The record gives the reactivity of an RNA of 207 nucleotides to 2A3. Source: RMDB library ARCHII, as collected in RNAgym.
[RMDB]
RNA sequence: GGGAACGACUCGAGUAGAGUCGAAAAGUCGCAAGACCGGUAGCAAUACCGCCAGAGGUCAUUUACGUCAGUUAAGCCCUGUCGGCGUCGCGACGCCAGGGUCGAAAACCUAGCGAAUCGCCGUAGUGCAGCGUGUUCGUCCGCGUCGCUGCGGUUAGUAAAGAUUACUGUUCGCAGUAAUCUUUACAAAAGAAACAACAACAACAAC
Reactivity to 2A3 in 0.01 (KOAc 150mM, MgCl2 10mM, bicine 150mM(pH8.5), 24C), signal-to-noise 1, nucleotides 027 to 156: g030u010c000g030c060a080a030g020a060c030c010g000g010u030a010g010c020a070a110u030a070c030c020g030c010c010a050g040a090g070g030u040c040a060u080u090u140a070c050g060u070c060a090g050u040u040a030a010g000c000c000c000u040g020u060c050g000g000c010g060u000c020g030c060g010a060c010g010c060c050a010g050g060g010u040c040g050a000a020a020a020c040c120u050a050g010c020g040a040a070u120c040g000c010c020g020u030a020g010u010g050c060a020g000c040g020u120g060u110u100c100g060u080c070c010g020c030g080u080c010g000c000u000g000c000g000g010u020u020a020